[RMDB]
RNA sequence: GGGAACGACUCGAGUAGAGUCGAAAAUGGUGUGACCGUCGGAAGUAAUGGUGGUGGUGUAGUCGGCCUCGCCGGCAUCACUUGGCUUCAAUGGGAUGGUGGUGACGAUGGUGGUAGGCUUGCCGUCAGAGUCCUUGGUCGUGAUGUGGGAGACGAGCCACCAAUUCUUGUUCGCAAGAAUUGGUGGAAAAGAAACAACAACAACAAC
Reactivity to 2A3 in 0.01 (KOAc 150mM, MgCl2 10mM, bicine 150mM(pH8.5), 24C), signal-to-noise 2, nucleotides 027 to 156: u130g040g010u030g020u050g040a060c040c020g060u070c070g010g060a060a020g040u140a090a150u160g070g000u020g040g000u030g000g010u060g020u030a070g040u030c000g030g000c030c060u110c060g010c010c000g010g020c000a020u010c000a000c030u060u100g040g010c000u110u050c080a060a130u110g010g010g030a040u070g000g080u020g000g000u070g000a030c030g020a030u050g010g040u030g000g050u030a030g080g000c040u040u110g050c020c010g000u010c000a010g000a000g040u040c000c030u060u100g040g000u030c030g020u010g000a040u060g000u080g000g030g010a030g010a000c070g000a020g020